[RMDB]
RNA sequence: GGGAACGACUCGAGUAGAGUCGAAAAUGGAAAUGAAACUUUCCGCGUUGACUUCACCGACUUCGGCCGCAAAUUCUGGCAAGCCAUGGCUGAGUGCCGCGCCUGGAUUAAGGCGAAUGGCGUGGAGAUGACAUGCACAUUUCGAUGUGCAUGUCAUAAAAGAAACAACAACAACAAC
Reactivity to 2A3 in 0.01 (KOAc 150mM, MgCl2 10mM, bicine 150mM(pH8.5), 24C), signal-to-noise 2, nucleotides 027 to 126: u080g030g060a010a010a070u110g050a160a130a070c080u040u020u000c000c000g010c080g060u050u150g080a040c000u010u010c010a030c020c010g030a020c030u020u020c040g300g060c060c020g020c090a080a040a010u040u020c020u040g010g000c090a070a010g070c060c050a170u130g040g000c030u070g150a090g170u170g020c030c000g040c040g020c010c000u000g050g000a030u080u030a050a010g010g000c000g010a000a010u090g040g030c200g000u000g000g000a030g010
Reactivity to DMS in 0.01 (KOAc 150mM, MgCl2 10mM, bicine 150mM(pH8.5), 24C), signal-to-noise 4, nucleotides 027 to 126: u010g020g010a020a010a030u000g010a170a100a110c260u000u000u000c000c010g040c210g020u010u000g000a180c030u000u000c000a030c020c030g000a110c130u000u000c030g030g020c010c020g010c150a110a060a060u010u000c030u000g000g020c000a190a160g010c090c150a100u000g010g030c050u000g000a140g010u010g040c020c010g010c130g000c010c000u000g000g020a050u000u020a080a150g000g000c010g020a050a010u000g000g010c120g040u000g010g000a040g020